RNA sequence: GGGAACGACUCGAGUAGAGUCGAAAAUACGCGAGGUUCGCCUCGCGUAAAAGAGGAGCGUAAACGUGAGCGUACGUAGUGCAGUACAUCGUUCCUACACGAAUGCACAUGGUUUCGACCAUGUGAAGGAAAGGUUACGUUUCGACGUAACCUUUCCAAAAGAAACAACAACAACAAC
Reactivity to 2A3 in 0.01 (KOAc 150mM, MgCl2 10mM, bicine 150mM(pH8.5), 24C), signal-to-noise 3, nucleotides 027 to 126: u040a000c000g000c000g010a020g040g040u060u080c170g120c040c000u000c000g010c010g020u000a000a000a000a020g140a010g030g020a030g040c030g040u110a010a080a110c060g040u060g140a040g080c030g050u070a020c020g080u090a050g090u060g060c040a030g030u040a030c020a060u020c030g010u010u000c000c010u020a010c100a010c050g200a120a000u260g020c000a000c010a000u000g010g020u020u050u100c200g100a010c000c000a000u010g000u010g040a020a030
Reactivity to DMS in 0.01 (KOAc 150mM, MgCl2 10mM, bicine 150mM(pH8.5), 24C), signal-to-noise 3, nucleotides 027 to 126: u000a000c000g030c000g010a030g030g000u020u010c270g010c010c000u000c000g010c010g020u000a000a020a080a110g010a090g010g020a070g010c020g060u010a030a120a080c110g020u000g000a090g050c280g010u000a010c070g000u000a080g000u010g020c040a140g000u000a120c070a120u010c020g020u000u000c020c000u000a100c200a050c190g010a080a130u000g000c000a010c000a020u000g010g000u000u000u010c210g000a000c000c000a010u000g000u000g000a030a090
The data come from the RNA Mapping Database (RMDB), library M2PK50.
This 177-nucleotide RNA was probed chemically with 2A3 and DMS.
The reactions ran in a buffer of 150 mM KOAc, 10 mM MgCl2 and 150 mM bicine (pH 8.5), at 24 C.
2A3 adducts were read by reverse transcription with SuperScript II with manganese.